[RMDB]
RNA sequence: GGGAACGACUCGAGUAGAGUCGAAAAUAUACCAAUUACUUCCGUGAGUACUACGGUGUGAACAAGAGCGAAGCUAACGCACUGGCUCACAUCAGCGUUCUGGAGGCGUGGAGCCUGAAUGAUAAUCUCACCAAAUCAUGUUCGCAUGAUUUGGUGAAAAAGAAACAACAACAACAAC
Reactivity to DMS in 0.01 (KOAc 150mM, MgCl2 10mM, bicine 150mM(pH8.5), 24C), signal-to-noise 3, nucleotides 027 to 126: u010a150u010a170c020c030a130a090u000u010a120c040u010u010c040c040g010u000g010a070g020u000a060c080u010a160c100g020g020u000g010u000g000a020a030c040a040a020g010a080g020c020g020a130a120g020c280u020a080a110c040g030c010a140c010u010g010g000c020u000c010a020c000a010u000c010a080g020c090g000u000u000c000u000g030g010a050g000g000c150g010u000g000g000a120g010c030c010u010g010a050a070u010g010a080u010a100a100u000c110
Reactivity to 2A3 in 0.01 (KOAc 150mM, MgCl2 10mM, bicine 150mM(pH8.5), 24C), signal-to-noise 2, nucleotides 027 to 126: u080a020u040a050c010c000a020a050u200u090a150c040u060u040c000c040g090u030g070a010g070u050a060c020u000a010c110g000g020u020g000u000g020a080a010c040a070a060g030a000g030c060g030a150a010g070c090u060a150a050c020g000c000a010c040u000g030g000c000u040c010a020c010a020u040c030a010g010c030g020u040u000c000u070g090g000a050g000g000c010g050u070g060g030a010g030c010c050u040g070a130a090u110g030a020u050a150a110u120c010